[RMDB]
RNA sequence: GGGAACGACUCGAGUAGAGUCGAAAAUUGAAAUUGAACCGUCCUGUUAUCGAAAGAUAGGCAGAAGAUACGAAGUGUGUGACAGCAUGGGAAGUAAAGGCAGACCGUGGUUCCCUUGAGUAUCUUAAUUAGGGGGACGAGUUCGCUCGUCCCCCAACAUAUUUUAUUGCUUCGGCAAUAAAAUAUGAAAAGAAACAACAACAACAAC
Reactivity to DMS in 0.01 (KOAc 150mM, MgCl2 10mM, bicine 150mM(pH8.5), 24C), signal-to-noise 2, nucleotides 027 to 156: u000u000g020a030a070a170u000u000g010a110a170c020c030g000u000c040c010u000g000u000u000a070u000c000g020a160a130a210g010a050u000a040g030g040c060a040g010a020a080g000a050u010a040c040g010a070a130g030u000g010u010g010u000g000a170c080a120g000c050a070u010g030g020g010a070a130g010u000a050a130a130g000g030c030a040g000a120c070c010g030u010g000g000u000u000c030c010c010u010u010g000a150g010u000a060u000c020u000u000a040a130u010u010a140g010g000g040g050g050a040c020g020a040g000u000u010c170g010c010u000c000g010u000c000c000c000c000c010a000a010
Reactivity to 2A3 in 0.01 (KOAc 150mM, MgCl2 10mM, bicine 150mM(pH8.5), 24C), signal-to-noise 2, nucleotides 027 to 156: u130u070g030a030a000a030u050u060g080a080a070c020c060g020u050c020c030u010g030u040u000a060u060c020g070a100a040a040g020a010u040a050g090g000c010a020g020a110a000g000a030u020a010c030g020a000a050g050u040g000u010g050u080g120a030c020a070g050c020a050u010g050g060g000a060a010g000u080a120a030a100g110g070c020a010g030a070c000c020g050u000g000g000u050u020c000c000c010u030u010g010a010g020u010a020u030c000u010u070a090a100u100u170a140g000g000g060g020g010a000c010g020a000g000u070u100c180g020c060u000c000g000u030c000c040c000c030c000a000a000
An RNA of 207 nucleotides, treated with DMS and 2A3 and read out base by base. For 2A3 the reverse transcriptase was SuperScript II with manganese. The reactions ran in a buffer of 150 mM KOAc, 10 mM MgCl2 and 150 mM bicine (pH 8.5), at 24 C. For DMS the reverse transcriptase was MarathonRT. The DMS profile rests on 4,304 reads.